[RMDB]
RNA sequence: GGGAACGACUCGAGUAGAGUCGAAAAUUGGUGCGUUUACGAGCGCGGCCUUCACGGCGGCUUCGACGGCAGACUGAAUGAGCAAAGCCACUUCUGGCGUCACGCCAGGCGCCGUAGGUAUACCAGCAUCGGGUUCCGGGGUCGGUGCGGGAGCGGGUAUUACAAUAAAUUUCGAUUUAUUGUAAUAAAAAGAAACAACAACAACAAC
Reactivity to 2A3 in 0.01 (KOAc 150mM, MgCl2 10mM, bicine 150mM(pH8.5), 24C), signal-to-noise 3, nucleotides 027 to 156: u060u080g020g000u010g010c010g040u050u050u050a080c090g020a100g110c060g000c000g100g030c030c000u190u300c170a060c080g000g040c030g030g010c030u100u090c120g010a020c010g050g100c000a000g010a030c090u090g120a220a300u140g040a160g070c060a190a070a050g020c020c000a010c040u020u010c000u030g190g110c010g020u020c010a010c040g020c030c020a050g100g000c020g000c020c000g000u010a030g000g040u090a060u060a160c010c050a010g030c010a030u070c010g090g020g010u240u080c120c080g000g000g040g000u100c080g000g070u240g040c180g020g030g010a040g020c080g000g010g040
Reactivity to DMS in 0.01 (KOAc 150mM, MgCl2 10mM, bicine 150mM(pH8.5), 24C), signal-to-noise 2, nucleotides 027 to 156: u000u000g010g010u000g010c000g020u000u010u010a040c080g030a080g000c020g020c030g040g010c010c020u000u000c100a080c100g020g050c030g020g020c050u020u020c040g030a080c000g020g010c030a080g020a170c180u000g000a130a100u000g010a170g020c020a100a070a190g010c080c020a050c060u010u010c080u000g020g030c000g010u000c050a070c040g000c040c010a150g010g030c080g020c000c020g040u000a030g000g020u000a100u010a050c010c020a140g020c050a070u000c040g000g030g000u000u010c060c050g020g010g010g000u000c090g000g010u000g000c090g010g020g000a140g030c130g000g010g010

The record gives the reactivity of an RNA of 207 nucleotides to 2A3 and DMS.
Values are in units of 0.01, from 0 to 300, in steps of 10.
DMS adducts were read by reverse transcription with MarathonRT.